This 177-nucleotide RNA was probed chemically with DMS and 2A3. Source: RMDB library RFM100, as collected in RNAgym.
[RMDB]
RNA sequence: GGGAACGACUCGAGUAGAGUCGAAAAGGCCUGAGGAAUGGCUCCUCUGUUUAUAACACACCCAAUACGAACCUGGUCAUGAUGUGAGGAGGGCUACAAAGUAUGUUGCUGUCCUUCCCACACAUGUAUGGGAAUGAAUCUUCGGAUUCAUUCCCAUAAAAGAAACAACAACAACAAC
Reactivity to DMS in 0.01 (KOAc 150mM, MgCl2 10mM, bicine 150mM(pH8.5), 24C), signal-to-noise 1, nucleotides 027 to 126: g010g000c010c000u010g000a060g000g000a090a070u010g000g000c010u000c040c040u000c010u010g000u020u000u010a000u000a170a080c070a030c230a100c000c000c050a170a020u020a010c060g040a110a070c170c010u000g000g010u000c000a070u030g000a120u000g000u000g000a110g000g000a040g040g030g000c000u000a040c010a060a090a180g000u030a090u060g030u000u000g020c060u000g020u000c050c000u000u010c040c000c020a010c030a030c020a000u000g040u010
Reactivity to 2A3 in 0.01 (KOAc 150mM, MgCl2 10mM, bicine 150mM(pH8.5), 24C), signal-to-noise 3, nucleotides 027 to 126: g110g000c010c040u030g010a040g040g070a180a160u130g180g000c020u000c000c000u000c000u000g070u050u200u010a200u060a050a020c040a000c000a090c060c000c010a010a010u160a060c060g000a030a060c000c020u040g020g000u090c000a000u060g130a170u000g000u010g000a030g000g010a000g010g000g000c000u040a040c010a030a150a080g150u130a160u300g170u070u000g060c020u000g030u030c020c000u040u160c000c000c000a010c000a000c000a000u040g000u040